[RMDB]
RNA sequence: GGGAACGACUCGAGUAGAGUCGAAAAAUCUUCCAGCCAAGAGGAGAGCAUGGCUCAGGUGGGAUUCAGGCGAGAACAGGGCAACGCACACCUACUAGCCAAGAUACAAAGCACUUAAUACAGGGAGCCUUAGCACGUAUUUCGAUACGUGCUAAGGAAAAGAAACAACAACAACAAC
Reactivity to DMS in 0.01 (KOAc 150mM, MgCl2 10mM, bicine 150mM(pH8.5), 24C), signal-to-noise 3, nucleotides 027 to 126: a100u020c080u000u000c030c030a110g010c030c070a110a090g010a140g000g020a110g010a060g010c080a080u000g010g000c060u000c110a050g020g020u000g010g000g000a170u010u010c130a070g000g000c050g000a070g010a070a070c150a050g020g000g020c050a080a080c100g010c070a050c100a060c030c010u020a100c030u000a020g010c020c030a060a060g000a070u010a050c150a060a090a040g010c050a050c050u000u000a050a100u020a100c100a070g000g010g000a100g020
Reactivity to 2A3 in 0.01 (KOAc 150mM, MgCl2 10mM, bicine 150mM(pH8.5), 24C), signal-to-noise 2, nucleotides 027 to 126: a000u040c030u050u000c010c030a010g060c010c030a110a000g090a020g060g030a080g000a010g060c050a080u120g010g000c000u030c050a050g050g000u050g060g000g000a020u080u090c050a060g020g020c000g030a030g040a040a030c070a100g000g110g000c030a040a020c010g000c000a040c020a030c020c020u040a060c000u010a020g010c020c010a050a010g040a030u150a070c080a040a090a000g010c020a030c080u080u130a080a020u080a130c070a030g030g000g000a020g050